[RMDB]
RNA sequence: GGGAACGACUCGAGUAGAGUCGAAAAACACAGAAACUGUCAAACAAUUUGCAUGGAAAUGUUAUGGCCAAAAACAUUAAAUCACAUGCUUUUGCCAAAAUGGGCUUUGAAGUAAUGUUACAGGCAAGGAUACUAUGGGAUUCGUCCCAUAGUAUCCAAAAGAAACAACAACAACAAC
Reactivity to 2A3 in 0.01 (KOAc 150mM, MgCl2 10mM, bicine 150mM(pH8.5), 24C), signal-to-noise 3, nucleotides 027 to 126: a000c040a000c010a000g110a010a190a050c060u100g090u250c050a040a060a040c020a070a130u080u050u160g010c010a000u030g000g050a010a040a040u040g030u060u060a070u120g120g070c040c000a050a090a080a010a000c020a000u060u060a070a140a050u080c040a090c000a210u040g000c000u020u000u060u090g050c000c040a000a090a090a180u140g020g020g010c000u030u010u120g050a030a010g000u030a000a090u060g010u020u050a050c070a040g030g050c060a030a120
Reactivity to DMS in 0.01 (KOAc 150mM, MgCl2 10mM, bicine 150mM(pH8.5), 24C), signal-to-noise 3, nucleotides 027 to 126: a100c070a080c060a070g000a120a070a090c050u020g020u000c050a070a060a150c090a050a040u000u000u000g020c000a000u000g010g000a050a100a050u010g000u000u000a050u000g000g030c050c080a020a080a030a030a010c000a010u000u000a050a060a170u000c060a050c050a030u000g000c000u000u000u000u010g010c080c100a090a060a070a070u030g010g000g000c070u000u000u000g000a080a090g010u000a020a080u000g010u000u010a040c190a130g000g020c060a100a100